[RMDB]
RNA sequence: GGGAACGACUCGAGUAGAGUCGAAAAUCACUGAGGCCUUUGGAGUGCCCAUAAACCAAAUCCAAAUUCACAAAUCUGGAGAAUUUUGCCGCUUGCGGUUUCCAAAGCCAAUUAGACCAGACGUGAGAUCAGCACUAUGUUUCGACAUAGUGCUGAUAAAAGAAACAACAACAACAAC
Reactivity to 2A3 in 0.01 (KOAc 150mM, MgCl2 10mM, bicine 150mM(pH8.5), 24C), signal-to-noise 1, nucleotides 027 to 126: u020c020a000c040u030g020a110g020g020c020c030u050u040u060g070g010a050g050u100g000c000c010c020a030u130a020a030a020c030c040a070a000a000u000c020c000a080a000a060u110u070c030a000c000a090a200a130u050c030u060g000g020a150g030a200a100u060u060u130u070g030c050c060g020c060u040u050g080c030g060g000u010u040u000c010c040a030a040a030g000c010c000a010a070u070u050a100g050a030c030c000a010g000a050c030g000u000g010a020g020
Reactivity to DMS in 0.01 (KOAc 150mM, MgCl2 10mM, bicine 150mM(pH8.5), 24C), signal-to-noise 2, nucleotides 027 to 126: u030c040a030c070u010g000a300g000g010c140c070u000u020u000g010g020a050g010u010g020c030c020c010a120u010a120a160a110c150c090a060a070a050u000c020c000a000a030a100u000u000c230a100c140a080a100a090u000c020u020g000g000a130g010a090a070u020u010u010u000g020c150c130g000c090u020u010g070c120g010g010u010u020u000c000c000a040a020a040g000c020c040a040a130u000u000a130g010a160c020c030a020g000a150c150g010u010g000a010g030

An RNA of 177 nucleotides, treated with 2A3 and DMS and read out base by base. DMS adducts were read by reverse transcription with MarathonRT. Reactivities are given for positions 27 through 126. The reactions ran in a buffer of 150 mM KOAc, 10 mM MgCl2 and 150 mM bicine (pH 8.5), at 24 C. Source: RMDB library OK2TST, as collected in RNAgym.